[RMDB]
RNA sequence: GGGAACGACUCGAGUAGAGUCGAAAAGCGCUCCUGAACGUGACUUCAGAACAGGGGCGCCGACAAGUUAGAUUGUCGAGGCGACAAAUUGGUCAGUCUGGGCAAUCUAACUGACCAAUCGCCGGCGCGUUGAGUCACGUCAACAACCCUGGAGCGAGCAUACUUUUAUGUUCGCAUAAAAGUAUGCAAAAGAAACAACAACAACAAC
Reactivity to 2A3 in 0.01 (KOAc 150mM, MgCl2 10mM, bicine 150mM(pH8.5), 24C), signal-to-noise 5, nucleotides 027 to 156: g050c020g000c000u000c000c020u040g030a070a010c000g000u000g020a010c010u110u060c230a070g040a300a130c100a150g090g060g050g000c000g000c000c000g010a020c010a010a000g000u000u000a000g000a010u000u000g000u010c060g070a000g000g010c000g000a000c030a060a300a300u220u200g140g010u030c080a100g010u000c040u090g030g000g020c010a000a000u000c000u000a000a000c000u000g000a000c020c060a020a110u120c100g050c050c020g010g000c000g010c050g060u030u090g000a000g000u010c000a000c000g000u010c000a070a090c020a070a130c040c000c010u030g000g000a000g000c000g010a010
Reactivity to DMS in 0.01 (KOAc 150mM, MgCl2 10mM, bicine 150mM(pH8.5), 24C), signal-to-noise 1, nucleotides 027 to 156: g030c030g020c000u000c000c000u030g000a140a050c010g000u010g030a050c000u000u000c100a150g020a060a250c160a140g000g000g060g030c020g000c000c000g010a000c000a070a120g030u010u000a000g020a120u000u000g040u000c020g020a030g000g040c000g010a040c030a040a100a230u000u010g010g000u010c000a070g010u010c010u000g000g020g010c080a040a020u000c000u000a010a030c000u000g010a110c140c070a110a140u010c050g010c030c000g010g010c000g000c020g080u010u000g000a120g010u000c020a030c020g000u000c050a080a060c100a110a200c040c010c000u000g000g000a050g000c010g040a220
An RNA of 207 nucleotides, treated with 2A3 and DMS and read out base by base. It was measured as part of the RMDB library OK3TST. The RNA was probed in 150 mM KOAc, 10 mM MgCl2 and 150 mM bicine (pH 8.5) at 24 C. For 2A3 the reverse transcriptase was SuperScript II with manganese. The 2A3 profile rests on 3,467 reads.